[RMDB]
RNA sequence: GGGAACGACUCGAGUAGAGUCGAAAAUUGGCGAAUGCCUGUGGAUCUUCAUUUGUUGCGGGUUCGAGACCCGUCAGAGCCCGGCUCUGUAGCUCAAUGGUAGAGCGGUGUAUUCACAUAAACUUGUAAAAGACACGUGCCUUCGGGCACGUGUCAACGAGUUAAAUACGUUCGCGUAUUUAACUCGAAAAGAAACAACAACAACAAC
Reactivity to 2A3 in 0.01 (KOAc 150mM, MgCl2 10mM, bicine 150mM(pH8.5), 24C), signal-to-noise 1, nucleotides 027 to 156: u070u030g030g000c060g130a280a060u300g000c010c010u010g000u000g010g000a010u050c060u160u010c100a060u060u050u160g050u050u000g030c000g000g000g010u000u020c010g020a010g020a070c000c010c000g000u000c010a000g010a000g010c110c240c130g070g000c000u000c000u010g040u030a010g000c000u010c020a020a050u170g160g050u160a030g010a020g030c000g030g000u020g010u000a040u000u030c010a010c000a050u230a080a100a050c080u070u100g070u100a060a070a020a010g000a000c010a000c000g010u030g000c000c000u020u060c230g020g000g000c000a000c000g000u000g000u000c000a000a000
Reactivity to DMS in 0.01 (KOAc 150mM, MgCl2 10mM, bicine 150mM(pH8.5), 24C), signal-to-noise 2, nucleotides 027 to 156: u000u000g020g020c010g010a030a110u000g000c000c000u020g020u010g000g010a020u120c050u000u000c040a050u010u000u000g010u010u000g010c010g000g010g020u000u000c040g020a300g030a070c030c000c000g040u000c030a070g010a140g020c020c100c060g030g010c030u000c030u000g010u000a070g020c020u000c040a040a150u010g020g030u030a080g000a040g050c020g000g030u000g000u000a070u010u030c100a030c030a120u020a080a060a060c060u020u000g030u000a130a050a070a140g020a030c000a010c020g030u010g000c000c000u010u010c300g040g020g000c000a000c000g020u000g010u010c000a010a040